About this RNA:
The record gives the reactivity of an RNA of 177 nucleotides to 2A3 and DMS.
[RMDB]
RNA sequence: GGGAACGACUCGAGUAGAGUCGAAAAGAUAUGGAACGGGAGCAGAGCUAGUAUCGGAAACGAUACAUAGCGACGAAGCUUUGUUCCUAAGUCAAAGAUUAACUCGUACUUCGGUACGAGUUAAUCACCAUCUUUCAUCCUUCGGGAUGAAAGAUGGAAAAGAAACAACAACAACAAC
Reactivity to 2A3 in 0.01 (KOAc 150mM, MgCl2 10mM, bicine 150mM(pH8.5), 24C), signal-to-noise 2, nucleotides 027 to 126: g020a000u000a010u050g000g000a000a020c050g060g160g120a080g030c010a010g020a000g070c020u000a000g010u000a000u000c010g000g000a000a000a020c000g010a010u040a010c030a270u010a000g000c010g300a110c030g020a020a010g000c010u110u070u160g020u000u010c000c000u010a030a000g020u000c040a130a100a060g000a000u010u010a000a000c000u000c010g000u000a010c010u060u080c300g130g000u000a000c000g000a000g000u000u000a000a000u000c010a000
Reactivity to DMS in 0.01 (KOAc 150mM, MgCl2 10mM, bicine 150mM(pH8.5), 24C), signal-to-noise 2, nucleotides 027 to 126: g010a010u000a060u020g000g000a020a010c000g010g000g000a040g030c000a050g010a110g000c000u010a030g020u010a000u010c000g010g020a040a000a040c010g010a010u000a000c000a070u000a010g010c000g010a130c290g010a090a080g000c010u000u000u010g000u000u000c000c000u000a010a080g000u000c010a150a140a150g000a010u000u000a010a020c000u000c000g010u000a000c000u000u010c260g030g030u000a000c000g010a010g000u000u000a000a000u000c000a240
DMS adducts were read by reverse transcription with MarathonRT.
The RNA was probed in 150 mM KOAc, 10 mM MgCl2 and 150 mM bicine (pH 8.5) at 24 C.
The 2A3 profile rests on 4,766 reads.
Reactivities are rounded to 0.1 and cut off at 0 and 3.